[RMDB]
RNA sequence: GGGAACGACUCGAGUAGAGUCGAAAAGUAGUGUCAUCUCCAGAGGAAAUAUCAUCACAACUUAAUGAAGAUCUAUUUCCAGAUGAUGAUUCACCGGCCACUAUUAUCGAACGAGUACAACCUCAUACUACUAUUAUUGACGAUACGCCACCUCCUAGCCUCAGGCUAGAUUCGUCUAGCCUGAGGCAAAAGAAACAACAACAACAAC
Reactivity to 2A3 in 0.01 (KOAc 150mM, MgCl2 10mM, bicine 150mM(pH8.5), 24C), signal-to-noise 1, nucleotides 027 to 156: g020u120a000g000u000g000u070c000a000u000c070u040c090c120a060g100a170g060g000a000a000a000u020a000u030c110a020u030c010a020c010a030a210c230u210u280a050a140u300g050a060a090g000a000u000c020u030a040u000u030u030c000c020a000g000a000u120g000a000u000g000a020u090u110c060a010c150c020g030g000c080c000a070c110u080a040u160u010a010u090c020g040a100a070c070g020a000g070u000a120c000a070a040c070c000u020c000a060u100a040c050u040a000c000u040a000u230u000a110u070u180g140a070c080g030a010u070a030c020g000c030c000a020c050c000u090c080c000u070a030
The record gives the reactivity of an RNA of 207 nucleotides to 2A3.
For 2A3, 336 sequencing reads were counted.
The data come from the RNA Mapping Database (RMDB), library OK3TST.
Values cover nucleotides 27 to 156.
The RNA was probed in 150 mM KOAc, 10 mM MgCl2 and 150 mM bicine (pH 8.5) at 24 C.
2A3 adducts were read by reverse transcription with SuperScript II with manganese.